[RMDB]
RNA sequence: GGGAACGACUCGAGUAGAGUCGAAAACGCAAGGAUGAGAAUGUGAUGUGGAAUGAGUAAAUCUAAGGUGAGGAGGCAUCCUCUUUAGUCCGCAAGACACUUGGUUGAAAAGAAAGCAUAUAUAAGCCGUUUUUCGUGGAUUCGUCCACGAAAAACGAAAAGAAACAACAACAACAAC
Reactivity to 2A3 in 0.01 (KOAc 150mM, MgCl2 10mM, bicine 150mM(pH8.5), 24C), signal-to-noise 1, nucleotides 027 to 126: c010g000c100a030a020g030g010a070u240g020a050g070a060a090u120g070u030g090a040u020g000u000g020g020a110a030u010g000a000g000u000a090a000a000u030c130u090a050a030g040g040u000g000a000g000g010a000g070g150c090a210u090c000c030u000c000u060u000u000a050g010u000c000c030g110c050a000a000g000a000c000a000c000u020u020g000g020u000u000g000a000a030a000a000g060a000a000a000g010c010a020u050a000u050a000u020a250a000g020c020
Reactivity to DMS in 0.01 (KOAc 150mM, MgCl2 10mM, bicine 150mM(pH8.5), 24C), signal-to-noise 2, nucleotides 027 to 126: c060g000c110a080a120g000g030a010u020g000a050g020a160a050u010g010u000g020a010u010g000u000g000g000a300a080u030g010a010g010u000a030a020a010u030c000u030a030a000g000g010u010g030a010g000g010a100g020g000c300a100u000c000c010u060c010u000u000u000a200g090u000c000c000g000c300a230a300g000a010c000a010c030u000u010g010g000u000u010g000a120a110a100a040g000a030a150a210g000c010a040u000a080u010a060u020a100a100g020c110